[RMDB]
RNA sequence: GGGAACGACUCGAGUAGAGUCGAAAAGAUAUGGACAAGAGGGAGGAACUACUCUGAGACCUCGGAAACGAGGUGUAGGAGCCGUUGAUCUCUUGUCCUAAGUCAAAGCCGCGGUUCGCCGCGGCAAGUUAUGGAUGUUCUUCGGAACAUCCAUAACAAAAGAAACAACAACAACAAC
Reactivity to DMS in 0.01 (KOAc 150mM, MgCl2 10mM, bicine 150mM(pH8.5), 24C), signal-to-noise 3, nucleotides 027 to 126: g010a040u000a300u020g000g000a010c010a010a000g020a020g000g000g000a030g000g000a050a010c030u020a300c000u000c010u000g000a230g000a040c000c000u000c010g010g000a120a090a160c000g000a010g010g020u000g000u000a300g000g000a010g000c010c010g010u000u000g010a040u000c000u010c000u000u000g010u000c000c010u000a010a070g000u000c050a040a120a110g000c010c000g020c000g020g000u000u010c250g000c000c000g030c010g010g000c000a010a020
Reactivity to 2A3 in 0.01 (KOAc 150mM, MgCl2 10mM, bicine 150mM(pH8.5), 24C), signal-to-noise 2, nucleotides 027 to 126: g010a010u100a040u150g010g010a000c010a000a010g000a020g040g010g000a040g020g000a040a050c080u260a050c000u290c000u010g060a090g050a040c000c000u010c000g030g000a040a060a010c000g000a000g010g000u020g010u010a010g000g020a010g010c010c010g080u130u020g020a030u020c010u000c000u010u000g000u000c000c000u010a000a000g010u030c020a010a110a080g010c000c000g000c040g020g000u060u110c300g040c130c000g010c000g000g010c000a000a000
Chemical mapping of a 177-nucleotide RNA with DMS and 2A3. For DMS the reverse transcriptase was MarathonRT. The 2A3 profile rests on 6,789 reads. The DMS profile rests on 3,002 reads.